This 207-nucleotide RNA was probed chemically with DMS and 2A3.
It was measured as part of the RMDB library OK3TST.
The RNA was probed in 150 mM KOAc, 10 mM MgCl2 and 150 mM bicine (pH 8.5) at 24 C.
The 2A3 profile rests on 959 reads.
DMS adducts were read by reverse transcription with MarathonRT.
[RMDB]
RNA sequence: GGGAACGACUCGAGUAGAGUCGAAAAGAUGUGGAUAAAAAGCCAGCGCGGGUGGUUUAGGGUACCACAGGUGGGUGCUUUGGAAACUUGCCGGUCGCCGUGCUCCUGUGAGCUUGCGUCCCUCCCCGGUUUCCUUUGCGCUCCCGCCUUCCGGACCCAACCGUGUAGUUUUCGAACUACACGGUUGAAAAGAAACAACAACAACAAC
Reactivity to DMS in 0.01 (KOAc 150mM, MgCl2 10mM, bicine 150mM(pH8.5), 24C), signal-to-noise 1, nucleotides 027 to 156: g020a140u010g000u000g020g000a110u000a040a070a060a110a130g070c030c010a040g010c090g010c060g030g000g040u000g020g010u000u010u000a070g010g010g020u010a090c040c010a060c090a100g010g030u000g010g010g070u000g010c030u000u000u000g010g010a040a010a040c010u000u030g040c100c060g000g020u010c020g030c000c040g020u000g020c010u000c010c100u010g010u020g010a090g000c020u000u000g000c000g000u010c010c010c040u010c030c030c010c080g000g010u000u000u010c010c000u010u000u000g010c000g010c080u010c000c030c040g040c030c050u010u010c070c030g010g000a130c040c030
Reactivity to 2A3 in 0.01 (KOAc 150mM, MgCl2 10mM, bicine 150mM(pH8.5), 24C), signal-to-noise 2, nucleotides 027 to 156: g030a050u090g020u110g040g060a050u120a130a150a040a020a010g040c050c020a020g000c050g010c070g020g100g020u040g010g030u020u120u160a100g010g000g000u090a200c010c010a030c090a070g000g010u000g000g010g010u030g000c010u020u040u030g010g020a000a010a010c000u020u110g090c090c010g010g010u010c010g000c060c120g060u080g020c010u020c020c080u270g160u250g130a000g010c020u050u070g000c010g000u010c000c020c000u090c030c020c000c020g000g000u000u000u010c010c000u000u020u010g000c050g040c060u050c000c000c010g040c000c000u050u010c070c020g020g030a030c000c000